[RMDB]
RNA sequence: GGGAACGACUCGAGUAGAGUCGAAAAGAGGCUCCAAGAAUUGGCUGACACCUGUCCUCUGACCCUAAAUUGUGAUAGGAUUGAAAACAAAGGAAAAGUGUUCGACAGUGAUGCCAUAAUUGUAACACUAACCGAGGAGUUUCGACUCCUCGGUUAGAAAAGAAACAACAACAACAAC
Reactivity to DMS in 0.01 (KOAc 150mM, MgCl2 10mM, bicine 150mM(pH8.5), 24C), signal-to-noise 1, nucleotides 027 to 126: g000a100g010g020c100u000c050c030a070a140g000a130a170u000u000g000g030c030u000g000a120c070a060c040c100u000g000u000c000c060u000c090u000g010a300c070c000c020u000a070a060a240u000u000g020u000g020a140u000a090g000g000a080u010u020g000a070a070a130a080c050a010a080a050g000g020a030a050a110a030g020u000g000u020u000c140g020a030c060a030g020u000g000a100u000g030c010c000a080u000a030a120u000u000g050u030a030a050c170a140
The record gives the reactivity of an RNA of 177 nucleotides to DMS. The DMS profile rests on 587 reads.